This 177-nucleotide RNA was probed chemically with DMS and 2A3. The 2A3 profile rests on 7,276 reads. 2A3 adducts were read by reverse transcription with SuperScript II with manganese. Conditions: 150 mM KOAc, 10 mM MgCl2 and 150 mM bicine (pH 8.5), 24 C. Source: RMDB library TTRDES, as collected in RNAgym.

RNA sequence: GGGAACGACUCGAGUAGAGUCGAAAAGAUAUGGAUGUAACAGCCAACAGCGACCGGGUCGGAAACGACCCGUCGACAUGGCUGUUUACAUCCUAAGUCAAAGUCGGGAACCUUCGGGUUCCCGACAGAUAUAUUAUCAGUUCGCUGAUAAUAUAUCAAAAGAAACAACAACAACAAC
Reactivity to DMS in 0.01 (KOAc 150mM, MgCl2 10mM, bicine 150mM(pH8.5), 24C), signal-to-noise 2, nucleotides 027 to 126: g000a030u000a090u000g000g000a010u000g000u000a010a010c000a000g020c000c000a080a060c170a160g000c010g000a020c100c220g040g000g010u000c010g010g000a020a030a070c000g000a010c000c000c010g000u000c000g000a010c060a300u020g020g010c000u000g000u000u010u000a000c000a010u000c000c000u000a000a070g000u000c010a120a120a140g010u000c010g010g000g020a010a010c000c000u000u010c250g040g020g020u000u000c000c000c000g010a000c000a010
Reactivity to 2A3 in 0.01 (KOAc 150mM, MgCl2 10mM, bicine 150mM(pH8.5), 24C), signal-to-noise 3, nucleotides 027 to 126: g010a020u010a010u090g000g000a000u010g000u010a010a000c000a010g030c010c040a230a050c120a240g010c010g040a020c090c300g000g020g010u030c020g000g000a030a000a000c000g000a010c000c020c000g010u000c000g000a010c040a100u300g000g010c000u000g000u000u000u010a000c000a000u020c000c000u000a000a000g010u010c010a110a080a070g010u010c010g010g020g010a010a000c020c000u070u180c300g170g000g000u020u000c000c000c000g000a000c000a000